[RMDB]
RNA sequence: GGGAACGACUCGAGUAGAGUCGAAAAAAAAAGAUAUGGAGAACACACGCUUGGAUUUAUAUGCGAUCCCAUGUCGGAAACGACAUGGGUAGCAUAUUGUCAGCGUGGUGUUCUCCUAAGUCAAAAAGUAGAUCUACUUGUUCGCAAGUAGAUCUACAAAAGAAACAACAACAACAAC
Reactivity to DMS in 0.01 (KOAc 150mM, MgCl2 10mM, bicine 150mM(pH8.5), 24C), signal-to-noise 1, nucleotides 027 to 126: a040a060a060a120a050g000a060u020a300u020g000g000a020g040a030a000c000a010c000a020c000g010c020u000u010g030g020a000u000u030u000a000u000a000u010g000c000g000a170u020c000c000c000a000u030g000u020c010g000g000a130a030a230c000g010a020c020a000u020g000g000g000u000a050g000c000a000u000a020u010u000g010u040c000a060g000c000g040u000g020g030u010g000u000u000c000u000c000c010u000a040a060g010u000c040a120a050a140a100a160
Reactivity to 2A3 in 0.01 (KOAc 150mM, MgCl2 10mM, bicine 150mM(pH8.5), 24C), signal-to-noise 1, nucleotides 027 to 126: a010a000a010a050a020g150a090u170a080u280g000g010a040g010a040a000c000a000c010a000c000g010c030u150u230g130g000a100u300u300u000a000u040a000u000g010c010g050a300u300c010c000c000a010u000g000u010c000g010g040a020a060a030c040g000a000c000a000u000g000g030g000u000a000g010c000a000u000a010u010u010g000u030c000a000g020c000g000u020g010g020u000g000u020u030c010u000c000c000u000a000a010g000u000c020a030a030a040a040a040